[RMDB]
RNA sequence: GGGAACGACUCGAGUAGAGUCGAAAAAGAGGCGAUACGUCGCCUCAAGCUGGGUGCUUAGCUUCUUUCACCAAGCAUAUUACACGCGGAUAACCGCCAAAGGAGAAACACUGACUACGGUCAGUGAGGAAGUUGGUUCGGUUCGCCGAACCAACAACUCACACAAAAUCUUCGGAUUUUGUGUGAGAAAAGAAACAACAACAACAAC
Reactivity to 2A3 in 0.01 (KOAc 150mM, MgCl2 10mM, bicine 150mM(pH8.5), 24C), signal-to-noise 4, nucleotides 027 to 156: a000g010a000g000g010c020g000a000u020a050c170g140u000c000g000c010c000u000c000a000a010g020c010u070g000g030g030u000g010c030u050u070a040g020c020u070u030c000u030u080u020c020a020c000c000a030a000g010c030a040u050a120u230u210a090c120a030c070g000c000g020g030a110u080a300a250c020c000g010c020c020a060a080a020g040g010a040g050a050a090a000c000a000c000u000g010a000c000u060a010c160g080g000u010c000a000g000u010g000a010g000g040a110a070g000u010u000g000g000u000u000c000g010g030u050u050c160g040c050c000g000a010a000c000c000a000a000c000a000a000
Reactivity to DMS in 0.01 (KOAc 150mM, MgCl2 10mM, bicine 150mM(pH8.5), 24C), signal-to-noise 1, nucleotides 027 to 156: a080g000a020g030g040c020g010a060u000a110c300g050u030c030g020c010c010u000c000a010a080g010c000u000g020g000g040u000g010c030u010u010a010g040c030u000u000c030u000u000u000c080a130c020c000a060a110g020c040a230u000a110u000u030a130c060a080c110g080c010g000g000a150u000a150a130c040c010g000c020c030a030a050a200g090g000a140g000a170a120a130c000a020c000u010g030a040c020u010a080c300g030g000u000c040a010g010u010g000a040g020g030a060a140g010u000u000g010g000u000u000c000g040g010u000u010c300g030c000c000g020a010a000c000c000a020a010c010a020a120
Overview: The record gives the reactivity of an RNA of 207 nucleotides to 2A3 and DMS. 2A3 is a SHAPE reagent: it acylates the 2'-hydroxyl of flexible nucleotides of all four kinds. For 2A3 the reverse transcriptase was SuperScript II with manganese. The reactions ran in a buffer of 150 mM KOAc, 10 mM MgCl2 and 150 mM bicine (pH 8.5), at 24 C.